The record gives the reactivity of an RNA of 170 nucleotides to DMS and 2A3. The 2A3 profile rests on 13,236 reads.
[RMDB]
RNA sequence: GGGAACGACUCGAGUAGAGUCGAAAAAGACCAUUUCUCUGCUGUAAAUGCUGCUAUGAUCAUGUUAUAGCAACUCCACAUAAGAUGGUUUUGUCUGUUUCUCCUUACGUUUGUAAUGCCCCUGGUUAAAGACAAAUCUUCGGAUUUGUCAAAAGAAACAACAACAACAAC
Reactivity to DMS in 0.01 (KOAc 150mM, MgCl2 10mM, bicine 150mM(pH8.5), 24C), signal-to-noise 7, nucleotides 027 to 129: a010g000a000c000c000a080u000u000u000c070u000c040u040g020c110u010g030u050a070a120a070u040g020c130u020g020c000u020a040u020g030a060u000c170a090u030g040u020u010a040u000a030g040c020a000a000c030u040c090c190a050c060a070u000a100a110g010a000u000g000g000u010u020u000u040g020u000c080u000g020u010u010u000c010u000c090c020u020u010a080c080g050u000u080u060g030u040a010a020u040g000c140c000c010c020u020g000g000u020u020a040a050a180
Reactivity to 2A3 in 0.01 (KOAc 150mM, MgCl2 10mM, bicine 150mM(pH8.5), 24C), signal-to-noise 3, nucleotides 027 to 129: a000g040a050c010c000a020u010u090u000c120u010c020u050g060c030u040g090u220a050a110a080u160g050c040u020g030c010u090a040u090g050a050u140c080a120u300g080u130u020a010u020a020g000c010a010a080c010u040c060c020a060c000a160u160a100a050g070a110u050g050g000u010u020u020u030g060u010c090u050g070u020u020u010c050u050c020c000u040u100a090c070g110u070u100u130g050u080a050a020u070g030c010c010c000c000u010g010g000u020u080a030a030a000